The data come from the RNA Mapping Database (RMDB), libraries RFM100 and RFMREP. This 177-nucleotide RNA was probed chemically with DMS and 2A3. For DMS the reverse transcriptase was MarathonRT.
[RMDB]
RNA sequence: GGGAACGACUCGAGUAGAGUCGAAAAGUUUUGGCCAGCAACGAUGGCGCGCAGUUCGAGCACAGAGAUUGCGUUCUUAUAACGUUGGCUAUAAUAAACAUCUAUCUAUCCGUAGCGUCACAAUGUGUCUGGAAACAGAGUUCGCUCUGUUUCCAGAAAAAGAAACAACAACAACAAC
Reactivity to DMS in 0.01 (KOAc 150mM, MgCl2 10mM, bicine 150mM(pH8.5), 24C), signal-to-noise 3, nucleotides 027 to 126: g010u010u000u000u000g010g020c000c020a030g000c070a100a160c210g020a120u000g010g010c040g000c030g000c030a020g010u000u000c050g010a130g030c130a140c130a050g000a090g010a020u000u010g000c000g000u000u000c050u000u050a080u000a100a070c150g000u000u010g010g000c010u010a090u020a100a030u060a050a040a090c050a090u000c010u000a130u000c020u000a110u000c040c030g020u000a090g010c050g010u000c020a030c030a140a060u050g000u010g010
Reactivity to 2A3 in 0.01 (KOAc 150mM, MgCl2 10mM, bicine 150mM(pH8.5), 24C), signal-to-noise 4, nucleotides 027 to 126: g020u040u040u060u080g010g000c010c000a000g000c010a040a030c060g080a030u050g070g000c020g000c010g000c000a020g000u070u070c020g050a030g080c090a070c070a160g100a010g010a050u020u050g010c010g020u010u010c010u030u270a170u010a090a040c060g010u010u010g030g000c000u020a010u020a100a060u070a020a050a010c050a030u030c050u090a030u030c010u030a030u020c020c010g100u060a020g020c000g030u050c010a000c020a130a080u150g040u050g010
Record summary:
The 2A3 profile rests on 2,622 reads. For 2A3 the reverse transcriptase was SuperScript II with manganese. The reactions ran in a buffer of 150 mM KOAc, 10 mM MgCl2 and 150 mM bicine (pH 8.5), at 24 C.